[RMDB]
Conditions: 150 mM KOAc, 10 mM MgCl2 and 150 mM bicine (pH 8.5), 24 C.
An RNA of 177 nucleotides, treated with DMS and 2A3 and read out base by base.
DMS adducts were read by reverse transcription with MarathonRT.
The DMS profile rests on 3,541 reads.
RNA sequence: GGGAACGACUCGAGUAGAGUCGAAAAGGGAAGCGAAGACCCUGUGGAGCUUUACUGCAGCCUGCCGUUGCUCCACAGCUGGGGGUGCGCAGGGUAGGCGGGAGGCUUCGAAGCCCCGUCUCCGGGCCGCCUCGUUUUAAUUCGUUAAAACGAGGCGAAAAGAAACAACAACAACAAC
Reactivity to DMS in 0.01 (KOAc 150mM, MgCl2 10mM, bicine 150mM(pH8.5), 24C), signal-to-noise 2, nucleotides 027 to 126: g000g010g000a120a140g030c020g030a090a050g000a100c040c090c000u010g000u000g000g000a010g000c010u010u020u040a040c040u000g000c030a100g020c100c130u030g030c050c060g000u000u000g010c000u060c010c000a020c050a000g010c130u040g000g000g000g000g010u040g010c110g000c080a110g000g000g000u020a050g000g010c000g000g000g030a070g000g000c000u000u010c140g000a120a190g000c030c020c010c020g000u000c010u010c010c020g000g010g030c070
Reactivity to 2A3 in 0.01 (KOAc 150mM, MgCl2 10mM, bicine 150mM(pH8.5), 24C), signal-to-noise 3, nucleotides 027 to 126: g030g010g010a090a050g040c020g040a050a010g110a130c000c020c000u000g010u000g000g000a010g000c010u180u180u150a070c010u010g030c000a040g200c020c110u130g010c010c020g040u040u040g000c000u000c000c010a010c000a000g020c030u040g020g000g010g000g020u140g020c060g000c060a020g020g040g040u110a030g030g000c020g040g050g000a050g020g040c010u110u130c150g030a030a010g000c000c000c010c000g010u000c000u000c010c010g000g050g010c000